[RMDB]
RNA sequence: GGGAACGACUCGAGUAGAGUCGAAAAGAGAGGCCAGUGGAAAGAUUCAGUUUCUCAUCGGAGAGCGAACGGAACAACCAUUCUCUCACAUAAUGGCAGUUAAUGAAGUACUCAUGAAGGGUGGUAGUGUACGCUGUGUAUUCGUACACAGCGUACAAAAAGAAACAACAACAACAAC
Reactivity to DMS in 0.01 (KOAc 150mM, MgCl2 10mM, bicine 150mM(pH8.5), 24C), signal-to-noise 3, nucleotides 027 to 126: g000a070g040a030g010g020c160c150a050g000u000g000g000a100a140a070g010a170u000u000c070a040g020u000u000u010c050u020c020a110u010c190g000g000a060g010a120g000c090g010a030a040c050g000g030a050a060c100a140a200c010c000a040u000u000c030u000c050u010c050a050c110a120u000a040a040u000g000g000c030a030g000u010u000a060a070u000g000a040a090g000u000a080c050u010c060a080u010g030a030a080g010g010g010u000g000g010u020a030g010
Reactivity to 2A3 in 0.01 (KOAc 150mM, MgCl2 10mM, bicine 150mM(pH8.5), 24C), signal-to-noise 1, nucleotides 027 to 126: g000a010g000a000g060g000c160c130a020g040u020g030g060a150a050a070g030a160u040u010c000a020g000u020u090u000c040u010c000a210u200c090g170g060a050g020a000g140c080g010a000a000c050g030g050a020a010c020a020a010c050c000a030u060u010c050u050c030u020c000a020c000a090u240a190a080u030g030g070c000a040g010u070u060a030a030u150g040a070a010g030u050a050c000u000c050a010u080g060a090a070g100g010g000u100g020g100u010a130g080